An RNA of 177 nucleotides, treated with DMS and 2A3 and read out base by base.
It was measured as part of the RMDB library OK2TRN.
The reactions ran in a buffer of 150 mM KOAc, 10 mM MgCl2 and 150 mM bicine (pH 8.5), at 24 C.
2A3 is a SHAPE reagent: it acylates the 2'-hydroxyl of flexible nucleotides of all four kinds.
For DMS the reverse transcriptase was MarathonRT.

[RMDB]
RNA sequence: GGGAACGACUCGAGUAGAGUCGAAAAGGGCGAGUUUCAGUGCGUCGCUGGAGAUGAGUGUGCCUACUUCACUGUCACCAUCACAGGUGGGGGGCCAGGUGGGCCUCGGAGGCACAGGGGAAGGUGCCACCCAUUUUGGAUUCGUCCAAAAUGGGUGAAAAGAAACAACAACAACAAC
Reactivity to DMS in 0.01 (KOAc 150mM, MgCl2 10mM, bicine 150mM(pH8.5), 24C), signal-to-noise 8, nucleotides 027 to 126: g010g010g010c050g020a090g010u000u000u000c070a060g010u000g010c130g010u010c050g030c050u010g000g000a100g010a080u010g010a100g010u000g010u000g000c030c020u000a090c060u000u000c130a080c090u010g000u000c020a050c020c020a050u010c210a100c230a120g000g020u000g000g000g020g000g010g010c030c040a160g010g020u010g020g010g000c010c010u000c030g010g000a060g010g010c010a020c030a080g000g000g010g010a110a100g010g010u000g010c100
Reactivity to 2A3 in 0.01 (KOAc 150mM, MgCl2 10mM, bicine 150mM(pH8.5), 24C), signal-to-noise 3, nucleotides 027 to 126: g060g010g020c060g020a060g020u060u090u100c090a070g040u060g060c030g090u060c060g000c060u040g060g030a090g010a100u150g040a020g140u060g010u050g020c000c010u060a140c030u070u100c040a050c160u070g070u110c020a010c040c000a050u100c060a050c030a090g040g000u030g020g000g000g000g000g000c000c030a070g120g140u190g100g020g000c000c000u010c010g020g040a030g010g000c010a000c000a030g010g010g000g010a070a060g000g030u060g030c000